The record gives the reactivity of an RNA of 177 nucleotides to DMS. The RNA was probed in 150 mM KOAc, 10 mM MgCl2 and 150 mM bicine (pH 8.5) at 24 C. The data come from the RNA Mapping Database (RMDB), library OK2TST.
[RMDB]
RNA sequence: GGGAACGACUCGAGUAGAGUCGAAAAGCUCGUGUUUAUCUUCCUGGUGACCAACAUGUUCAUCCUUGGGGUCACACUGCUCAGUAUAGCAUGCCGUCUGGUGAACCUUGUUUUGCUCUUGAACUAAAAAUCGAUCCAUCUUCGGAUGGAUCGAUUUAAAAGAAACAACAACAACAAC
Reactivity to DMS in 0.01 (KOAc 150mM, MgCl2 10mM, bicine 150mM(pH8.5), 24C), signal-to-noise 1, nucleotides 027 to 126: g010c030u010c050g010u000g020u000u010u000a060u000c110u000u000c030c000u000g010g010u000g010a040c010c050a140a110c080a050u010g000u010u000c150a080u000c160c020u000u000g010g000g000g010u000c070a040c020a100c020u010g010c050u000c100a080g040u000a090u010a110g010c050a130u000g000c030c080g010u000c050u000g000g000u000g000a090a070c030c070u000u010g000u000u000u010u000g020c070u000c030u000u000g010a090a100c150u030a010a050